[RMDB]
Structure probing data (2A3 and DMS) for a 177-nucleotide construct. The data come from the RNA Mapping Database (RMDB), library OK2TST. 2A3 adducts were read by reverse transcription with SuperScript II with manganese. The RNA was probed in 150 mM KOAc, 10 mM MgCl2 and 150 mM bicine (pH 8.5) at 24 C. The DMS profile rests on 9,560 reads.

RNA sequence: GGGAACGACUCGAGUAGAGUCGAAAAGGGACUCGGGUUGCCGUCGGGUUUUCACCCGCGCGGUUCACAGACCGCACAUCCCCAGGCUGAGCCCUGCAACGCGGCGCGAGGCCGACAGCCCCGGCCAGUCAUUUCAUAAGUUCGCUUAUGAAAUGACAAAAGAAACAACAACAACAAC
Reactivity to 2A3 in 0.01 (KOAc 150mM, MgCl2 10mM, bicine 150mM(pH8.5), 24C), signal-to-noise 5, nucleotides 027 to 126: g050g010g040a060c040u040c130g050g030g000u050u120g010c010c010g030u040c010g010g050g020u060u060u170u210c100a040c000c000c000g000c040g000c010g010g020u090u080c070a080c000a070g120a060c000c000g050c020a010c010a100u070c020c010c010c000a020g020g000c030u120g060a020g020c010c020c020u010g000c030a110a110c090g010c020g080g030c020g010c020g040a050g010g040c000c010g010a020c020a020g010c010c000c000c000g010g000c010c010a010
Reactivity to DMS in 0.01 (KOAc 150mM, MgCl2 10mM, bicine 150mM(pH8.5), 24C), signal-to-noise 8, nucleotides 027 to 126: g020g010g010a060c060u000c080g010g010g030u000u000g010c040c040g020u000c040g000g020g010u000u010u010u010c140a120c060c000c000g020c140g020c010g020g010u000u010c180a110c290a130g010a110c010c000g010c070a120c140a130u000c030c020c020c070a090g010g010c040u000g000a230g010c070c040c040u000g000c090a060a090c150g020c040g010g000c150g020c090g010a170g000g000c010c010g000a070c130a080g000c020c010c020c020g010g000c050c040a170